[RMDB]
An RNA of 177 nucleotides, treated with DMS and 2A3 and read out base by base. It was measured as part of the RMDB library M2PK90. The RNA was probed in 150 mM KOAc, 10 mM MgCl2 and 150 mM bicine (pH 8.5) at 24 C. For DMS, 1,880 sequencing reads were counted.

RNA sequence: GGGAACGACUCGAGUAGAGUCGAAAAGCAUAGCGUCAAGUUGGUUGACCAGAAGUCUGGUUAGCAAACAGAGUAAAACCAAAAGGUUAGACGCACUGUGUGAAAAAGUACGAAAGUACAAAGAUAAACGAUGCUUACAAUUCGUUGUAAGCAUCGUAAAAGAAACAACAACAACAAC
Reactivity to DMS in 0.01 (KOAc 150mM, MgCl2 10mM, bicine 150mM(pH8.5), 24C), signal-to-noise 3, nucleotides 027 to 126: g000c010a010u000a100g020c010g000u000c030a150a120g010u020u000g000g000u000u010g010a000c000c000a020g010a300a240g060u010c000u000g020g000u000u000a020g010c010a060a040a020c010a140g010a190g030u000a060a060a050a020c000c000a090a070a110a090g000g010u000u000a060g010a020c010g040c040a060c150u000g020u000g000u000g000a080a050a060a100a070g020u000a000c000g000a060a030a130g010u000a010c000a070a110a070g000a120u010a050a100
Reactivity to 2A3 in 0.01 (KOAc 150mM, MgCl2 10mM, bicine 150mM(pH8.5), 24C), signal-to-noise 3, nucleotides 027 to 126: g040c000a030u050a010g080c000g040u020c040a100a070g000u020u030g070g000u010u020g010a000c020c010a000g040a300a040g200u110c010u020g000g010u010u000a010g010c020a030a000a000c020a010g100a020g130u200a060a100a030a090c030c010a160a280a140a070g020g000u030u020a010g010a000c000g000c000a000c040u040g000u000g000u020g060a170a030a040a010a030g010u000a000c020g000a100a000a000g010u020a000c000a000a130a010g090a050u130a050a100